[RMDB]
RNA sequence: GGGAACGACUCGAGUAGAGUCGAAAAUCCUUUCUCGAUAGAGAUUGGAGUCAUACAACCCCAGAAACCAUUCCUUAUACCUUGAGUAUUGCUGAAUUCAGUUUCGCGUGCAUGCUCUUGGCUAUUCAUACCAAGGACAACUUCGGUUGUCCUUGAACUUAAGUUUGGACUUCGGUCCAAACUUAAGAAAAGAAACAACAACAACAAC
Reactivity to 2A3 in 0.01 (KOAc 150mM, MgCl2 10mM, bicine 150mM(pH8.5), 24C), signal-to-noise 2, nucleotides 027 to 156: u000c000c000u020u000u010c020u000c000g270a300u180a300g010a000g000a000u000u020g000g000a010g020u040c030a030u120a250c030a050a160c000c000c000c040a000g080a050a050a010c050c010a140u060u120c020c010u010u140a060u120a180c000c000u000u020g000a020g000u020a090u180u070g040c050u040g030a100a110u120u210c050a110g300u080u030u080c090g000c040g010u100g000c000a000u020g000c000u010c000u000u000g000g020c000u080a060u090u120c060a090u040a220c040c010a010a000g000g000a000c000a000a000c000u050u090c250g100g000u000u000g000u000c000c000u000u000g000a000a000
Reactivity to DMS in 0.01 (KOAc 150mM, MgCl2 10mM, bicine 150mM(pH8.5), 24C), signal-to-noise 1, nucleotides 027 to 156: u000c010c000u010u000u000c010u010c010g000a290u000a240g020a060g010a060u000u000g000g000a060g000u000c070a200u010a070c070a070a120c020c010c040c000a150g000a100a060a110c020c070a260u000u030c020c020u010u000a180u000a060c000c000u000u000g000a090g020u000a000u010u000g030c020u000g000a030a040u020u010c180a180g010u000u000u000c050g060c140g080u020g090c030a070u000g000c000u010c020u000u000g030g030c060u010a070u010u000c080a140u000a080c050c000a040a000g010g010a050c000a010a070c000u000u000c160g040g080u000u010g030u000c000c000u000u000g010a020a100

Record summary: Source: RMDB library M2RFPK, as collected in RNAgym. The record gives the reactivity of an RNA of 207 nucleotides to 2A3 and DMS. Values cover nucleotides 27 to 156. Conditions: 150 mM KOAc, 10 mM MgCl2 and 150 mM bicine (pH 8.5), 24 C.